The record gives the reactivity of an RNA of 177 nucleotides to DMS and 2A3.
For 2A3, 45,171 sequencing reads were counted.
The RNA was probed in 150 mM KOAc, 10 mM MgCl2 and 150 mM bicine (pH 8.5) at 24 C.
For DMS, 16,709 sequencing reads were counted.
It was measured as part of the RMDB library TTRINS.
[RMDB]
RNA sequence: GGGAACGACUCGAGUAGAGUCGAAAAGAUAUGGAUAUUGAACUACCAACCGAAAUGCCUAUGAAGUUGAUGUACUUCGGAAACGAAGUACAUCAAUGGAGGCAUAGGUUGGCAAUAUCCUAAGUCACCUAAUGAAAUAGUUCGCUAUUUCAUUAGGAAAAGAAACAACAACAACAAC
Reactivity to DMS in 0.01 (KOAc 150mM, MgCl2 10mM, bicine 150mM(pH8.5), 24C), signal-to-noise 8, nucleotides 027 to 126: g010a040u000a300u010g000g010a010u000a010u000u000g000a100a070c130u030a300c020c000a010a000c000c010g000a130a180a090u000g010c000c000u000a230u020g010a170a200g010u000u000g010a020u000g000u000a010c010u000u010c000g010g000a100a090a160c000g010a010a000g010u000a000c000a000u000c000a000a010u000g000g000a010g010g020c000a010u000a020g000g000u000u000g000g000c010a010a000u000a010u000c000c000u000a040a100g010u000c040a240
Reactivity to 2A3 in 0.01 (KOAc 150mM, MgCl2 10mM, bicine 150mM(pH8.5), 24C), signal-to-noise 9, nucleotides 027 to 126: g030a030u090a040u190g000g000a000u000a010u020u030g020a120a090c100u170a110c300c010a010a000c010c000g100a300a300a090u030g010c010c010u300a300u300g110a120a030g020u010u000g000a000u000g000u000a000c000u000u000c010g010g010a060a060a020c010g000a000a000g000u000a000c000a000u000c000a000a000u000g000g020a010g010g040c000a000u010a020g000g000u000u000g000g000c000a000a000u000a000u000c000c000u020a120a020g010u000c030a020